[RMDB]
The record gives the reactivity of an RNA of 207 nucleotides to 2A3. It was measured as part of the RMDB library OK3TST. The 2A3 profile rests on 452 reads. The reactions ran in a buffer of 150 mM KOAc, 10 mM MgCl2 and 150 mM bicine (pH 8.5), at 24 C. Values cover nucleotides 27 to 156.
RNA sequence: GGGAACGACUCGAGUAGAGUCGAAAACUUCGGCGACCGCGAGCAGCAGUACGGCAACCCGAGCGAAUCGUUCGACCGGAUCGCCGGGCUGUGGUCGGCCUACAUCGGCACCGAGCUGAACGGGCUCGACGUGGCGAAUCUAAUGAUCUUGCUCAAGAAAUUACGACUCUUUCGAGAGUCGUAAUUUAAAAGAAACAACAACAACAAC
Reactivity to 2A3 in 0.01 (KOAc 150mM, MgCl2 10mM, bicine 150mM(pH8.5), 24C), signal-to-noise 1, nucleotides 027 to 156: c040u000u030c100g000g060c010g000a000c010c000g040c090g070a010g000c000a000g000c000a000g020u030a000c000g040g000c040a030a020c000c000c010g000a100g070c050g070a110a150u300c170g290u170u000c020g080a080c000c080g000g000a030u280c030g000c030c020g010g000g000c000u000g000u050g020g000u020c050g050g050c000c000u060a040c070a110u030c000g150g020c010a000c020c000g010a000g000c000u070g010a260a170c250g040g050g000c000u000c000g000a020c080g010u000g010g150c040g010a000a030u040c040u150a080a080u220g090a070u010c010u050u070g020c020u000c020a000a070g070